[RMDB]
RNA sequence: GGGAACGACUCGAGUAGAGUCGAAAAGCGUACUACGCUAUGUAGUAAGAGACAUGCGGGACGGCCGGGGCUUCCCAAAUAGGAAGCAAGAAUGUUUUCGCAACAGCUCUUAUGAAAGCGUAUCGCAAACGAUAAAUUUGUUCGCAAAUUUAUCGAAGAUUUAUACGAGGUUCGCCUCGUAUAAAUCAAAAGAAACAACAACAACAAC
Reactivity to DMS in 0.01 (KOAc 150mM, MgCl2 10mM, bicine 150mM(pH8.5), 24C), signal-to-noise 2, nucleotides 027 to 156: g010c020g030u000a020c040u000a000c020g040c070u000a090u010g030u010a210g000u000a000a040g000a060g010a070c020a300u010g000c030g000g020g030a040c030g010g010c300c010g000g000g040g000c020u000u000c000c010c030a020a050a170u000a020g040g000a030a020g050c000a080a120g020a040a260u020g000u000u000u000u010c080g040c080a060a040c040a090g000c000u000c010u000u000a030u000g000a160a090a050g020c000g000u000a010u000c020g010c020a070a030a100c000g000a000u010a000a020a000u020u000u000g010u000u010c280g010c010a010a000a000u000u000u020a000u000c000g000a030a140
Reactivity to 2A3 in 0.01 (KOAc 150mM, MgCl2 10mM, bicine 150mM(pH8.5), 24C), signal-to-noise 3, nucleotides 027 to 156: g020c010g020u060a060c040u000a000c030g000c010u010a030u150g020u000a000g000u010a000a000g020a000g020a060c010a090u030g000c010g000g000g030a010c000g020g030c050c030g130g030g220g000c030u010u000c030c000c000a190a290a020u220a070g000g010a000a000g000c030a040a040g050a050a050u100g050u050u050u180u300c010g000c010a020a020c010a040g040c000u000c000u020u000a000u030g030a030a000a000g000c000g000u010a010u300c010g000c000a000a000a110c020g000a000u000a000a010a000u010u010u010g050u070u130c210g000c140a000a000a000u000u000u000a000u000c000g000a050a020